[RMDB]
RNA sequence: GGGAACGACUCGAGUAGAGUCGAAAAGAUUUAAACAGAUGGAGAUACACAAAUGUUUGAAUCCCAGUAACAAAAAUCCUGGUAUCUCGGGUAUACAGUAGUGCAGAUACUGUCUUUUUAAUGCUCCUUAGGUUUUCCAUCUUCGGAUGGAAAACAACAUAACGUACCAGUUCGCUGGUACGUUAUGAAAAGAAACAACAACAACAAC
Reactivity to DMS in 0.01 (KOAc 150mM, MgCl2 10mM, bicine 150mM(pH8.5), 24C), signal-to-noise 2, nucleotides 027 to 156: g000a070u010u000u000a020a030a040c020a060g000a300u000g010g020a120g020a170u000a080c100a160c050a030a060a300u000g010u010u010u010g000a060a030u010c000c020c020a170g030u000a080a120c050a030a100a070a070a170u000c030c010u000g000g000u000a050u000c020u010c000g000g010g000u000a090u000a020c020a070g040u000a040g010u000g040c070a130g000a120u000a040c000u010g020u000c030u000u000u010u010u020a070a160u000g020c010u010c030c010u010u000a120g010g000u020u000u000u000c000c010a000u010c000u010u000c300g020g000a020u000g010g000a010a000a010a030c000a010a070
Reactivity to 2A3 in 0.01 (KOAc 150mM, MgCl2 10mM, bicine 150mM(pH8.5), 24C), signal-to-noise 4, nucleotides 027 to 156: g000a000u030u000u060a000a000a000c010a020g040a050u020g030g000a040g000a030u050a050c020a000c010a020a130a030u030g020u010u010u020g010a020a010u010c010c010c030a040g110u160a120a150c100a110a170a020a000a030u030c000c000u000g020g010u020a020u010c020u020c020g000g000g010u050a030u050a020c010a010g030u050a010g040u030g220c060a020g060a190u030a020c000u010g070u090c030u070u150u060u060u110a090a100u070g040c030u130c060c020u050u090a050g010g150u010u000u000u000c000c010a010u010c000u020u070c250g080g000a000u000g000g000a010a000a000a000c000a000a000